[RMDB]
RNA sequence: GGGAACGACUCGAGUAGAGUCGAAAACGGCCGCCUCGCGCCUCGUGCGGCUUAUCAUCAACAUGAAGGGCAUGCGCCACGUAGGCGACAUUAACGACACUGUGCGUGCCUACCUCGACGAGGCCGGACACCUUGGAGGUUUCGACCUCCAAGGUGUAAAAGAAACAACAACAACAAC
Reactivity to 2A3 in 0.01 (KOAc 150mM, MgCl2 10mM, bicine 150mM(pH8.5), 24C), signal-to-noise 4, nucleotides 027 to 126: c020g020g000c010c000g000c000c020u080c070g060c030g000c010c000u010c000g040u030g000c020g020g000c000u000u120a130u130c010a030u030c020a030a150c050a090u130g080a120a100g040g000g000c000a000u040g000c010g000c030c030a090c120g060u100a120g150g050c020g060a100c050a110u150u220a140a060c030g030a020c020a020c090u100g020u040g000c000g000u020g000c000c000u040a070c000c010u050c000g010a020c010g000a000g000g000c010c000g010g000
Reactivity to DMS in 0.01 (KOAc 150mM, MgCl2 10mM, bicine 150mM(pH8.5), 24C), signal-to-noise 2, nucleotides 027 to 126: c110g000g000c000c000g000c020c080u000c070g000c100g010c000c020u000c030g030u010g000c000g000g000c020u010u020a080u010c060a060u050c280a200a100c190a090u000g020a070a220g000g020g000c050a000u000g000c000g030c070c180a100c270g020u010a100g020g010c040g000a090c210a060u040u050a100a090c060g000a090c040a090c040u010g000u010g010c040g050u000g010c040c000u010a050c100c030u020c080g000a030c010g010a030g000g000c000c000g030g000